[RMDB]
Chemical mapping of a 177-nucleotide RNA with DMS and 2A3. The 2A3 profile rests on 3,941 reads. Conditions: 150 mM KOAc, 10 mM MgCl2 and 150 mM bicine (pH 8.5), 24 C. 2A3 adducts were read by reverse transcription with SuperScript II with manganese. Source: RMDB library M2PK50, as collected in RNAgym.

RNA sequence: GGGAACGACUCGAGUAGAGUCGAAAAUUGAACGGAUUCGUCCGUUCAACGCGUGCGAUCCAAACGUAGUAGAAAAGUACAGACGAAAGCACAAGGAUCAAAUGAUACAGCCGUUCGCGGCUGUAAACUGAACAGAAGUUUUCGAACUUCUGUUCAGAAAAGAAACAACAACAACAAC
Reactivity to DMS in 0.01 (KOAc 150mM, MgCl2 10mM, bicine 150mM(pH8.5), 24C), signal-to-noise 5, nucleotides 027 to 126: u000u010g000a000a010c020g000g010a020u020u000c240g030u000c000c000g010u000u010c000a030a020c120g010c130g000u000g020c030g000a140u000c010c020a040a100a170c070g020u000a050g030u010a100g010a070a070a100a110g000u000a040c020a060g000a200c220g010a060a050a170g000c040a030c050a120a160g000g010a070u000c030a070a100a080u020g020a210u000a020c000a000g000c000c000g030u020u020c210g020c010g010g010c000u000g010u000a000a050a170
Reactivity to 2A3 in 0.01 (KOAc 150mM, MgCl2 10mM, bicine 150mM(pH8.5), 24C), signal-to-noise 3, nucleotides 027 to 126: u020u010g010a000a000c010g000g010a000u050u050c160g040u020c030c000g000u000u010c000a000a000c010g040c020g030u030g030c040g000a010u000c000c020a010a120a040c070g020u010a010g040u020a010g220a090a200a040a010g130u050a040c040a030g120a060c050g040a110a090a030g020c030a020c020a100a060g060g000a020u070c030a020a070a050u140g030a030u000a040c010a010g010c010c010g020u050u080c200g010c020g100g000c010u000g000u000a010a010a000